Conditions: 150 mM KOAc, 10 mM MgCl2 and 150 mM bicine (pH 8.5), 24 C. Chemical mapping of a 177-nucleotide RNA with 2A3 and DMS. Values cover nucleotides 27 to 126. The data come from the RNA Mapping Database (RMDB), library OK2TST.
RNA sequence: GGGAACGACUCGAGUAGAGUCGAAAAAAGCCCAUCGGCCUGUACGGUGUCGAGACGGCGGUGCAGCUCAAGGUCAAGUCGUUCAUUCACCCGCGUGAGGGCUUCAGCAGUGUCGAGCAGAUCCGCACGAUGACAAGUUUUUCGAAACUUGUCAUCGAAAAGAAACAACAACAACAAC
Reactivity to 2A3 in 0.01 (KOAc 150mM, MgCl2 10mM, bicine 150mM(pH8.5), 24C), signal-to-noise 3, nucleotides 027 to 126: a000a000g080c000c000c000a040u040c010g000g000c000c010u100g070u250a100c100g060g000u060g030u080c000g000a010g010a030c060g040g000c030g000g050u050g000c040a040g020c030u030c040a050a070g120g040u050c020a000a030g020u020c000g060u030u020c010a020u110u080c040a050c020c040c010g050c040g050u060g040a070g020g030g000c030u060u060c040a030g010c020a050g050u040g090u200c030g010a000g000c020a030g020a110u040c010c010g030c020a040
Reactivity to DMS in 0.01 (KOAc 150mM, MgCl2 10mM, bicine 150mM(pH8.5), 24C), signal-to-noise 4, nucleotides 027 to 126: a070a130g000c020c010c020a180u000c040g010g010c030c020u000g010u020a080c150g010g000u030g020u010c040g020a080g010a130c120g000g010c010g010g000u010g020c110a140g000c020u000c040a130a110g010g010u000c070a080a080g030u000c010g010u010u010c010a100u000u000c090a100c060c010c080g020c120g010u010g000a080g010g010g000c050u000u000c110a080g020c040a090g000u000g020u000c080g010a040g020c040a080g000a110u000c030c010g010c120a250